The data come from the RNA Mapping Database (RMDB), library OK3TST. This 207-nucleotide RNA was probed chemically with DMS and 2A3. The DMS profile rests on 4,043 reads.
[RMDB]
RNA sequence: GGGAACGACUCGAGUAGAGUCGAAAAUGGACUGGUGGGCUUACUGGUAGCUUUAACCAAGGGCGCAACAUCGCAACAGGUAAUAUUAACUUGUUUGGUGGUACACCAGACGGUUCAAGCUUUAUCCGAACCAACAGCGGAAGCACAGAAAACGACCCGUAAUACAUUGCUUCGGCAAUGUAUUACGAAAAGAAACAACAACAACAAC
Reactivity to DMS in 0.01 (KOAc 150mM, MgCl2 10mM, bicine 150mM(pH8.5), 24C), signal-to-noise 2, nucleotides 027 to 156: u000g010g000a080c000u000g010g020u000g020g010g010c060u020u010a130c050u000g020g000u000a070g030c010u000u000u000a070a050c030c030a070a300g000g010g000c020g030c040a060a020c010a050u010c020g050c050a100a070c000a020g010g020u000a100a220u000a180u000u000a080a020c000u000u000g000u010u000u010g020g040u010g020g040u010a090c030a060c000c010a030g020a200c190g010g010u010u000c070a050a050g000c040u010u010u000a050u010c020c030g000a050a100c050c010a020a070c020a070g020c050g010g000a060a110g000c020a080c030a110g010a070a100a130a090c070g000a080c070c020
Reactivity to 2A3 in 0.01 (KOAc 150mM, MgCl2 10mM, bicine 150mM(pH8.5), 24C), signal-to-noise 6, nucleotides 027 to 156: u080g030g040a040c020u030g000g020u030g030g040g030c040u050u110a050c030u140g030g010u020a020g010c000u020u060u050a020a010c030c020a040a050g050g020g020c060g000c030a030a100c010a040u050c040g020c090a000a030c020a010g010g020u050a050a080u110a180u300u160a090a030c000u040u110g020u040u020u030g010g000u020g010g080u090a030c010a010c020c000a000g050a050c080g000g010u020u000c040a030a010g010c000u040u100u110a080u070c020c030g000a030a040c020c020a040a050c030a040g030c020g060g020a050a010g050c060a050c040a090g120a060a130a030a010c040g100a040c030c010
Conditions: 150 mM KOAc, 10 mM MgCl2 and 150 mM bicine (pH 8.5), 24 C.